[RMDB]
Chemical mapping of a 177-nucleotide RNA with DMS and 2A3. For DMS, 20,734 sequencing reads were counted. 2A3 adducts were read by reverse transcription with SuperScript II with manganese.
RNA sequence: GGGAACGACUCGAGUAGAGUCGAAAAAGUGGUAGAGGCAGCGCCGCCGCAGUGCGUCGUGCAGGUCACGGCUGCGGUUGGACGUGAGCACCGCGAUCGGCGGGCACUCCGCGAGGAAAGUGCCCAGGUGAAGUAGAGAUUUCGAUCUCUACUUCACAAAAGAAACAACAACAACAAC
Reactivity to DMS in 0.01 (KOAc 150mM, MgCl2 10mM, bicine 150mM(pH8.5), 24C), signal-to-noise 6, nucleotides 027 to 126: a120g010u010g000g020u010a040g000a110g000g010c030a300g010c020g010c000c010g010c030c020g000c020a010g010u000g020c120g000u030c040g010u010g030c070a100g010g020u050c060a020c010g010g000c000u010g000c000g000g010u010u040g030g000a110c030g030u020g000a170g010c020a060c020c010g000c050g000a090u020c070g010g010c100g000g000g000c000a000c010u010c000c000g020c250g000a250g000g000a040a070a060g020u010g000c000c000c000a070g010
Reactivity to 2A3 in 0.01 (KOAc 150mM, MgCl2 10mM, bicine 150mM(pH8.5), 24C), signal-to-noise 9, nucleotides 027 to 126: a000g070u070g040g020u080a070g020a120g250g020c020a010g020c010g000c000c000g000c000c010g000c010a010g010u140g190c100g140u090c010g000u060g040c060a110g060g190u190c020a000c000g000g000c000u010g010c010g040g010u170u300g080g000a060c010g020u030g010a020g000c010a010c020c000g000c010g040a090u130c040g100g030c000g060g010g000c000a000c000u010c010c000g030c050g020a080g020g040a100a130a040g010u010g000c000c000c000a010g010

The 2A3 profile rests on 15,940 reads.
The RNA was probed in 150 mM KOAc, 10 mM MgCl2 and 150 mM bicine (pH 8.5) at 24 C.
For DMS the reverse transcriptase was MarathonRT.
The data come from the RNA Mapping Database (RMDB), library OK1LIB.
Values cover nucleotides 27 to 126.